The record gives the reactivity of an RNA of 177 nucleotides to 2A3 and DMS. For DMS the reverse transcriptase was MarathonRT. Reactivities are given for positions 27 through 126. High 2A3 reactivity points to a flexible backbone, as in loops and unpaired stretches. 2A3 adducts were read by reverse transcription with SuperScript II with manganese. Conditions: 150 mM KOAc, 10 mM MgCl2 and 150 mM bicine (pH 8.5), 24 C.
[RMDB]
RNA sequence: GGGAACGACUCGAGUAGAGUCGAAAAAAAAAAAAGAUAUGGAUUGCGAUGAAAUGUAGUCCGGUAACACGGUCGGAAACGACCGUGCCAGGACGCAGAUAUGGAGCAAUCCUAAGUCAAAAAAAAACACAUAAUAGUGGUUCGCCACUAUUAUGUGAAAAGAAACAACAACAACAAC
Reactivity to 2A3 in 0.01 (KOAc 150mM, MgCl2 10mM, bicine 150mM(pH8.5), 24C), signal-to-noise 1, nucleotides 027 to 126: a020a000a000a000a020a020a140a000g090a040u120a050u070g000g010a010u000u000g000c030g100a130u110g150a190a110a020u020g040u040a300g020u030c010c010g010g000u050a080a010c010a010c000g020g000u010c030g050g070a070a060a030c000g000a000c000c010g000u000g000c010c010a070g000g000a000c000g000c030a010g010a050u160a070u300g190g060a130g000c010a000a000u020c000c000u000a100a010g070u090c010a030a000a000a040a000a000a040a160a040
Reactivity to DMS in 0.01 (KOAc 150mM, MgCl2 10mM, bicine 150mM(pH8.5), 24C), signal-to-noise 1, nucleotides 027 to 126: a000a010a010a080a030a070a000a060g040a020u010a300u000g010g000a010u000u000g020c010g010a300u010g000a030a050a110u000g000u000a080g010u000c000c040g000g010u010a100a110c000a010c000g000g030u000c000g000g000a070a040a130c000g000a010c010c010g040u000g000c000c020a160g010g000a020c000g010c000a000g000a120u010a060u000g010g050a300g000c010a000a010u000c000c000u000a000a060g010u000c010a000a000a000a010a020a040a090a110a150